Chemical mapping of a 177-nucleotide RNA with DMS. For DMS, 4,552 sequencing reads were counted. Conditions: 150 mM KOAc, 10 mM MgCl2 and 150 mM bicine (pH 8.5), 24 C. It was measured as part of the RMDB library TTRINS.
[RMDB]
RNA sequence: GGGAACGACUCGAGUAGAGUCGAAAAGAUAUGGAUGUAGAAAUGCCGUCGUAGCUUUUGACGACGGUGUGUCGGAAACGACACUAACGUCGAUAAGCUACGACGGCAUUUCUGACAUCCUAAGUCACUUUUCAUAGUUGUUCGCAACUAUGAAAAGAAAAGAAACAACAACAACAAC
Reactivity to DMS in 0.01 (KOAc 150mM, MgCl2 10mM, bicine 150mM(pH8.5), 24C), signal-to-noise 3, nucleotides 027 to 126: g020a060u000a300u000g010g000a020u020g010u000a020g010a010a000a000u000g000c020c010g010u010c010g010u010a000g010c000u000u000u000u000g020a210c080g000a030c040g020g010u000g020u000g010u000c000g010g000a110a100a210c010g010a020c010a000c010u010a090a100c000g000u010c000g020a200u000a020a000g020c000u000a000c020g000a000c000g000g010c000a000u000u000u000c000u010g010a030c010a010u000c000c000u000a030a110g010u010c050a260